[RMDB]
An RNA of 177 nucleotides, treated with DMS and 2A3 and read out base by base. For 2A3, 5,077 sequencing reads were counted. Source: RMDB library OK2TRN, as collected in RNAgym.
RNA sequence: GGGAACGACUCGAGUAGAGUCGAAAAUCGACAUCGUCGUCGACCAUGGCAUCUCAGGUUUGUAUGUCGCUCGGGCAUUGGACCGUGCAGCUCGCUUCCGUGGCUAUCCCAAGGCGGUGCGAACAGAAGCUAUUAAAUCGUUCGCGAUUUAAUAGCUAAAAGAAACAACAACAACAAC
Reactivity to DMS in 0.01 (KOAc 150mM, MgCl2 10mM, bicine 150mM(pH8.5), 24C), signal-to-noise 6, nucleotides 027 to 126: u000c020g000a070c040a090u010c170g010u000c100g010u000c030g000a060c070c030a100u010g000g010c100a030u000c070u000c080a110g010g000u000u000u010g010u000a020u000g010u010c060g000c120u000c090g000g000g000c030a100u000u000g010g000a050c040c040g010u010g020c080a110g000c060u000c050g010c040u000u000c030c030g010u000g020g010c060u000a100u000c020c020c010a080a130g000g020c020g010g000u000g010c030g000a050a080c100a120g010a120
Reactivity to 2A3 in 0.01 (KOAc 150mM, MgCl2 10mM, bicine 150mM(pH8.5), 24C), signal-to-noise 4, nucleotides 027 to 126: u070c000g010a020c000a060u120c100g190u040c040g030u020c030g030a020c010c020a090u050g040g000c010a100u000c060u040c100a070g070g040u060u110u060g200u120a050u040g030u010c020g030c140u110c120g200g000g000c040a060u080u070g050g040a040c030c000g000u030g000c030a020g050c010u030c050g020c000u120u010c020c000g030u040g060g020c030u060a100u120c020c020c020a000a000g030g000c010g000g030u020g020c000g020a020a010c040a060g130a110